Chemical mapping of a 177-nucleotide RNA with 2A3 and DMS.
[RMDB]
RNA sequence: GGGAACGACUCGAGUAGAGUCGAAAAGGUACAUCAGGCCAUAUCACCUAGAACUUUAAAUGCAUGGGUAAAAGUAGUAGAAGAGAAGGCUUUCAGCCCAGAAGUGAUACCCAUGUUUUCAGCAUUAUCCUCCCCUCCUUUUCGAAGGAGGGGAGGAAAAAGAAACAACAACAACAAC
Reactivity to 2A3 in 0.01 (KOAc 150mM, MgCl2 10mM, bicine 150mM(pH8.5), 24C), signal-to-noise 1, nucleotides 027 to 126: g050g000u040a130c030a080u080c060a030g020g070c000c000a130u090a000u270c070a210c000c030u110a070g020a100a000c070u170u190u170a180a060a070u050g000c000a000u000g020g010g020u000a040a040a050a030g150u270a050g010u010a000g050a140a000g000a050g050a110a100g190g000c020u080u040u070c000a080g040c000c000c020a000g090a100a010g090u030g000a070u000a140c000c000c000a000u000g000u000u000u070u000c030a000g000c020a020u000u040a080
Reactivity to DMS in 0.01 (KOAc 150mM, MgCl2 10mM, bicine 150mM(pH8.5), 24C), signal-to-noise 2, nucleotides 027 to 126: g010g000u010a000c030a080u020c050a160g000g030c020c000a130u010a070u020c060a130c020c000u000a110g030a120a030c060u030u040u050a090a110a160u120g040c010a090u000g000g020g000u000a020a110a120a140g000u000a050g030u100a080g040a050a110g000a120g000a180a120g000g000c060u010u060u000c190a140g000c000c030c050a030g000a110a010g040u000g000a190u000a000c000c000c010a000u000g000u000u000u000u000c060a080g000c150a070u030u060a170

The DMS profile rests on 1,499 reads. The data come from the RNA Mapping Database (RMDB), library OK1LIB.